[RMDB]
Structure probing data (DMS) for a 177-nucleotide construct.

RNA sequence: GGGAACGACUCGAGUAGAGUCGAAAAUUCGUGGACUCGUUAUUGCACCCCCGACGAGGUGCGCGUGGUUAUCAUCGGCCAGGACCCAUAUCACCACCCCGGCCAGGCGCACGGACUUGCGUUUAGCAAACAGCACUCUCUUCGGAGAGUGCUGUUUAAAAGAAACAACAACAACAAC
Reactivity to DMS in 0.01 (KOAc 150mM, MgCl2 10mM, bicine 150mM(pH8.5), 24C), signal-to-noise 1, nucleotides 027 to 126: u010u010c040g000u000g030g000a070c020u000c000g040u000u000a090u010u000g000c120a240c050c000c040c040c020g020a050c090g030a170g000g000u000g000c030g030c050g030u000g000g020u000u000a040u000c120a060u000c070g000g000c020c110a120g020g000a070c050c000c020a080u010a090u000c070a100c060c040a120c040c050c040c060g020g000c020c010a030g000g000c020g000c000a030c070g030g010a140c160u000u010g020c040g010u000u000u000a130g010c110
Overview: The DMS profile rests on 936 reads. The RNA was probed in 150 mM KOAc, 10 mM MgCl2 and 150 mM bicine (pH 8.5) at 24 C.